[RMDB]
An RNA of 177 nucleotides, treated with 2A3 and DMS and read out base by base. The 2A3 profile rests on 4,174 reads. The reactions ran in a buffer of 150 mM KOAc, 10 mM MgCl2 and 150 mM bicine (pH 8.5), at 24 C. Values cover nucleotides 27 to 126. DMS adducts were read by reverse transcription with MarathonRT.

RNA sequence: GGGAACGACUCGAGUAGAGUCGAAAAUUGAUACAGGCCGGGAAAGGGAUCAGGCAACAACCUGUACGCUGUGACCUGCAAAACUCACUGUCUGACCGGCGACGAUUUUGCAGCGUUUGCGCGUUUACGCCAUACUAUACUUCGGUAUAGUAUGGCGAAAAGAAACAACAACAACAAC
Reactivity to 2A3 in 0.01 (KOAc 150mM, MgCl2 10mM, bicine 150mM(pH8.5), 24C), signal-to-noise 3, nucleotides 027 to 126: u040u060g000a000u040a060c020a030g090g010c040c030g010g020g060a090a150a050g160g000g020a050u070c020a020g000g050c040a060a020c020a020a010c070c010u120g040u140a010c010g000c040u090g020u020g030a020c000c010u010g000c030a000a000a020a000c060u050c050a050c090u090g020u020c040u070g060a090c030c020g010g030c010g000a030c040g010a020u020u000u000u020g010c000a000g030c020g090u040u100u110g020c020g000c010g010u010u030u050a050
Reactivity to DMS in 0.01 (KOAc 150mM, MgCl2 10mM, bicine 150mM(pH8.5), 24C), signal-to-noise 4, nucleotides 027 to 126: u000u000g020a110u010a070c070a090g030g030c050c020g000g000g000a080a080a100g010g000g010a080u010c020a020g000g020c070a060a060c140a110a130c040c080u000g010u000a050c030g010c020u010g090u010g010a030c020c010u000g000c010a010a010a010a040c180u000c060a100c130u010g010u000c040u010g000a170c200c070g000g010c080g000a030c130g000a100u000u000u000u000g000c000a020g010c130g030u000u000u010g020c030g010c020g020u000u010u000a120